[RMDB]
Notes
The data come from the RNA Mapping Database (RMDB), library OK1LIB. Structure probing data (2A3 and DMS) for a 177-nucleotide construct. For 2A3, 1,079 sequencing reads were counted. The RNA was probed in 150 mM KOAc, 10 mM MgCl2 and 150 mM bicine (pH 8.5) at 24 C.
RNA sequence: GGGAACGACUCGAGUAGAGUCGAAAAAGUAUGUGGACUGGUCAUCUUGGUCUGGGCAAUAAAGAAUAUAGUGUCAAGAACAAUGGGGAUAAGAAACGCAAUAGCUGAUUACAACAGGCUAUACGAAUCAUCGUUGACGAUUCGUCGUCAACGAUGAAAAAGAAACAACAACAACAAC
Reactivity to 2A3 in 0.01 (KOAc 150mM, MgCl2 10mM, bicine 150mM(pH8.5), 24C), signal-to-noise 2, nucleotides 027 to 126: a030g240u230a080u290g070u090g010g030a000c050u050g000g040u070c030a020u030c060u140u050g000g010u090c090u080g000g100g000c000a010a010u040a170a090a000g220a200a040u160a000u030a120g090u070g130u180c090a080a080g020a060a070c020a010a000u040g010g010g000g000a000u020a160a050g000a020a050a000c000g000c130a090a000u010a050g000c000u020g000a050u300u220a050c040a140a050c000a090g010g000c030u040a000u010a020c000g000a000a010
Reactivity to DMS in 0.01 (KOAc 150mM, MgCl2 10mM, bicine 150mM(pH8.5), 24C), signal-to-noise 2, nucleotides 027 to 126: a090g010u030a010u010g040u010g000g000a050c030u000g000g010u000c020a040u040c030u020u020g000g000u000c020u000g030g000g000c060a040a050u020a090a120a050g010a080a040u030a030u010a020g030u000g000u000c030a040a040g000a040a130c110a060a080u080g000g040g000g030a020u000a020a130g000a140a000a130c030g010c080a090a010u000a020g000c000u030g000a120u030u020a080c300a160a080c050a060g000g000c000u000a010u000a100c160g000a040a090